[RMDB]
RNA sequence: GGGAACGACUCGAGUAGAGUCGAAAAACGCAGAUGCGAAAGCAGGGCCUAACGAACCACCUAGUUCCCUCUUUAUGAGGGCAGGUGAUAAGAGAGAAGUUACCCCAGGGAUAACUGAGUUGUCCUCUGAUAGGCGUCUAUUCGUAGACGCCUAUCAAAAAGAAACAACAACAACAAC
Reactivity to DMS in 0.01 (KOAc 150mM, MgCl2 10mM, bicine 150mM(pH8.5), 24C), signal-to-noise 3, nucleotides 027 to 126: a110c100g010c060a090g000a130u010g000c020g010a090a040a120g000c060a050g020g020g010c030c040u000a020a140c050g010a180a140c200c010a010c000c000u030a100g030u060u030c000c000c000u000c000u010u030u020a160u060g000a010g000g000g020c040a010g000g000u000g020a070u000a040a110g000a120g030a100g010a100a110g010u010u000a060c030c010c010c060a080g010g000g000a060u010a050a050c010u010g020a170g000u020u000g000u000c030c010u000c130
Reactivity to 2A3 in 0.01 (KOAc 150mM, MgCl2 10mM, bicine 150mM(pH8.5), 24C), signal-to-noise 3, nucleotides 027 to 126: a000c010g000c020a050g130a140u160g020c000g050a050a000a000g070c050a140g020g000g000c020c020u040a070a090c010g010a010a040c070c000a000c000c010u030a060g010u150u140c000c030c000u020c010u030u280u170a270u300g000a000g010g000g010c000a000g000g020u010g010a010u080a100a020g160a000g020a000g040a090a090g010u000u030a180c000c000c010c070a040g030g030g020a050u020a090a030c090u090g070a020g080u010u000g010u040c020c000u000c070
Source: RMDB libraries RFM100 and RFMREP, as collected in RNAgym. Structure probing data (DMS and 2A3) for a 177-nucleotide construct. The RNA was probed in 150 mM KOAc, 10 mM MgCl2 and 150 mM bicine (pH 8.5) at 24 C. Reactivities are given for positions 27 through 126.